[RMDB]
RNA sequence: GGGAACGACUCGAGUAGAGUCGAAAAAUCGAGGAAGCAGCGUUCGAGUGCCAGCUGUGCGGAACGCUUACGCGUGUGCCGCAGUCCAGCGGCGACUUCCAGGAGCCACACGAGUGCGAAGGGUGUGGUACUACGGCUGAUUCGUCAGCCGUAGUACAAAAGAAACAACAACAACAAC
Reactivity to DMS in 0.01 (KOAc 150mM, MgCl2 10mM, bicine 150mM(pH8.5), 24C), signal-to-noise 4, nucleotides 027 to 126: a070u010c050g000a150g000g010a040a030g010c090a070g010c040g000u000u010c080g010a130g020u000g000c020c030a160g020c070u010g030u020g020c020g000g000a100a010c010g000c010u010u010a090c220g000c020g030u030g020u010g020c000c000g020c010a050g000u000c300c080a070g010c020g020g010c010g010a040c030u010u000c020c020a140g000g010a200g000c020c000a010c000a040c040g010a140g010u000g010c090g010a110a080g010g010g010u000g020u010g000
Reactivity to 2A3 in 0.01 (KOAc 150mM, MgCl2 10mM, bicine 150mM(pH8.5), 24C), signal-to-noise 1, nucleotides 027 to 126: a020u070c020g020a000g010g010a000a040g000c050a010g030c010g070u050u070c040g060a070g090u090g060c010c020a080g060c030u040g050u050g060c000g010g030a000a000c000g000c000u050u100a040c080g010c010g010u110g110u200g120c020c000g010c010a000g050u080c050c050a010g000c000g010g010c010g010a000c010u030u060c000c000a020g000g060a020g000c020c000a020c000a010c010g060a060g090u220g060c090g070a080a070g100g000g000u020g000u010g000